[RMDB]
RNA sequence: GGGAACGACUCGAGUAGAGUCGAAAACAAGUCGCUGGGUAUUCUUGUACAGGAUAGGAGUCAGACGUUGAAACCACUGAAGCGCGCACGGUGGUGGAGUGUGACUCCCUGGAAUACCUGUGCUGAAGCGCGCACGGCAACCGAAAGGUGCGUCCAAUCCUGAAGUGUUGUUCGCAACACUUCAGGAAAAAGAAACAACAACAACAAC
Reactivity to DMS in 0.01 (KOAc 150mM, MgCl2 10mM, bicine 150mM(pH8.5), 24C), signal-to-noise 1, nucleotides 027 to 156: c040a040a210g010u010c020g020c030u000g010g010g040u000a070u000u000c060u020u000g010u000a300c150a220g000g020a260u000a000g040g000a040g010u000c000a040g020a020c000g030u000u000g000a300a220a050c030c000a030c010u040g000a060a120g000c010g130c040g020c000a300c030g000g060u000g000g040u000g020g050a060g000u000g000u000g000a020c000u020c010c000c010u040g040g030a110a030u000a000c070c010u010g000u020g030c010u000g020a050a090g000c030g040c060g020c020a210c060g010g030c020a080a210c030c000g000a100a130a270g000g040u000g010c040g140u000c020c080a050a300
Reactivity to 2A3 in 0.01 (KOAc 150mM, MgCl2 10mM, bicine 150mM(pH8.5), 24C), signal-to-noise 1, nucleotides 027 to 156: c040a070a090g060u070c000g000c010u040g000g020g000u020a030u020u030c020u090u250g160u210a180c070a140g090g080a140u300a140g000g020a010g000u000c000a000g010a210c000g060u090u050g000a020a000a000c000c000a000c000u010g010a170a000g050c020g000c000g010c000a040c010g000g050u000g000g000u010g010g000a030g010u170g010u000g030a000c000u020c000c000c010u040g020g000a000a000u000a000c000c000u000g000u010g000c000u030g010a100a010g000c000g000c000g000c000a000c010g000g000c000a020a010c010c000g020a060a030a020g000g000u020g010c000g000u000c030c040a000a090

Source: RMDB library RNAMAK, as collected in RNAgym.
An RNA of 207 nucleotides, treated with DMS and 2A3 and read out base by base.